[RMDB]
RNA sequence: GGGAACGACUCGAGUAGAGUCGAAAAGCGCUUAAAUUAAAUUUCCCUUGCUGAGCUCAUCUCAGCAAACAAUAACAAAUAACAAAUAAGAACAGCAGGGAAGGCUGUUCUUAUUUGUAACAAUAAAGCUAAACCAGUAAUUCGUUACUGGUUUAGCAAAAGAAACAACAACAACAAC
Reactivity to DMS in 0.01 (KOAc 150mM, MgCl2 10mM, bicine 150mM(pH8.5), 24C), signal-to-noise 1, nucleotides 027 to 126: g010c130g000c060u010u020a060a080a110u000u000a040a140a080u040u000u000c000c000c010u010u000g010c000u000g000a010g000c300u020c280a180u000c010u010c000a010g000c030a000a060a140c190a080a040u040a030a170c140a080a060a090u020a090a040c000a000a010a000u000a000a020g020a030a010c000a030g020c010a030g010g010g050a150a100g000g000c000u000g000u000u000c000u000u000a000u000u000u000g000u000a060a080c160a100a090u010a090a090a130
Reactivity to 2A3 in 0.01 (KOAc 150mM, MgCl2 10mM, bicine 150mM(pH8.5), 24C), signal-to-noise 1, nucleotides 027 to 126: g000c010g010c130u130u140a020a060a150u110u140a080a060a130u080u220u040c000c000c020u020u030g000c000u010g000a030g010c060u050c130a170u140c030u000c000a000g020c000a010a010a000c020a020a070u180a050a010c030a040a110a020u090a040a020c000a000a000a000u060a000a000g010a000a000c000a010g010c020a020g050g060g180a090a000g100g010c000u000g020u000u000c000u000u000a000u000u000u030g000u010a000a000c010a000a010u170a070a010a000